The record gives the reactivity of an RNA of 177 nucleotides to DMS and 2A3.

[RMDB]
RNA sequence: GGGAACGACUCGAGUAGAGUCGAAAACAGAGGGUAUGAGUAUGGCCUCAACCUGGACGCACUGGAAGGCUACGAGAUCGCCAACCCACGCAUGAUUAAAGCGCUUAAACAACGGCGCGGGCGUGAACAUCGAUAGAGCAUUCGUGCUCUAUCGAUGAAAAGAAACAACAACAACAAC
Reactivity to DMS in 0.01 (KOAc 150mM, MgCl2 10mM, bicine 150mM(pH8.5), 24C), signal-to-noise 3, nucleotides 027 to 126: c110a100g020a180g000g000g000u000a050u000g000a060g010u000a080u000g010g010c060c040u000c010a050a040c050c010u000g010g020a140c120g060c090a090c050u000g000g010a070a200g000g020c040u010a060c060g000a070g010a090u010c100g010c020c060a070a120c070c010c010a040c040g030c020a040u000g000a130u010u010a040a100a110g000c010g010c020u010u000a030a040a070c300a090a100c260g000g010c000g010c010g000g010g000c020g020u020g000a070a170
Reactivity to 2A3 in 0.01 (KOAc 150mM, MgCl2 10mM, bicine 150mM(pH8.5), 24C), signal-to-noise 3, nucleotides 027 to 126: c030a010g100a060g040g000g050u100a190u200g010a010g050u130a120u220g090g020c030c000u010c020a020a040c000c000u030g060g050a040c060g010c060a050c050u030g040g020a080a030g060g000c000u030a040c060g030a000g030a180u040c010g000c040c010a030a040c020c000c010a000c000g000c010a040u110g030a230u300u210a130a050a030g000c020g000c000u070u070a140a300a000c030a090a030c060g000g000c010g000c000g040g020g000c010g000u010g010a030a020
Description:
The reactions ran in a buffer of 150 mM KOAc, 10 mM MgCl2 and 150 mM bicine (pH 8.5), at 24 C. Reactivities are rounded to 0.1 and cut off at 0 and 3. 2A3 adducts were read by reverse transcription with SuperScript II with manganese. Values cover nucleotides 27 to 126.